[RMDB]
RNA sequence: GGGAACGACUCGAGUAGAGUCGAAAAGCCUAACAGUUCGCUGUUAGGCAAAUGCACAGACUUCGCAACUGUGAAAAACACAACAGAAGUGUCUAAGCGAGGAUCGUUGCGUCUUCGGACGCAACAAGUUAUCUUAAGUAUUCGUACUUAAGAUAACAAAAGAAACAACAACAACAAC
Reactivity to 2A3 in 0.01 (KOAc 150mM, MgCl2 10mM, bicine 150mM(pH8.5), 24C), signal-to-noise 9, nucleotides 027 to 126: g000c000c000u000a000a000c000a010g050u080u110c170g040c110u000g000u000u000a000g000g000c000a010a020a010u090g000c000a010c010a030g050a050c030u040u010c040g000c050a090a080c050u020g000u020g100a130a010a000a020a000c080a020c040a150a080c050a110g140a270a030g150u050g030u070c060u110a080a030g010c010g010a010g040g040a100u140c110g000u000u000g000c000g000u000c000u010u030c190g080g000a000c000g000c000a000a000c000a000a000
Reactivity to DMS in 0.01 (KOAc 150mM, MgCl2 10mM, bicine 150mM(pH8.5), 24C), signal-to-noise 9, nucleotides 027 to 126: g010c000c000u000a000a000c000a010g020u000u020c230g030c000u000g010u000u000a000g000g010c000a000a020a030u010g020c030a030c030a020g000a060c040u000u000c020g010c030a180a060c020u000g010u000g000a050a080a070a110a070c050a030c040a090a130c200a130g010a100a090g010u000g010u000c090u000a080a060g010c010g010a030g000g010a160u010c120g010u000u000g000c000g010u000c000u000u010c170g010g000a000c010g010c000a000a000c000a040a080

Chemical mapping of a 177-nucleotide RNA with 2A3 and DMS.
DMS adducts were read by reverse transcription with MarathonRT.
DMS (dimethyl sulfate) methylates the pairing face of unpaired adenines and cytosines.
2A3 adducts were read by reverse transcription with SuperScript II with manganese.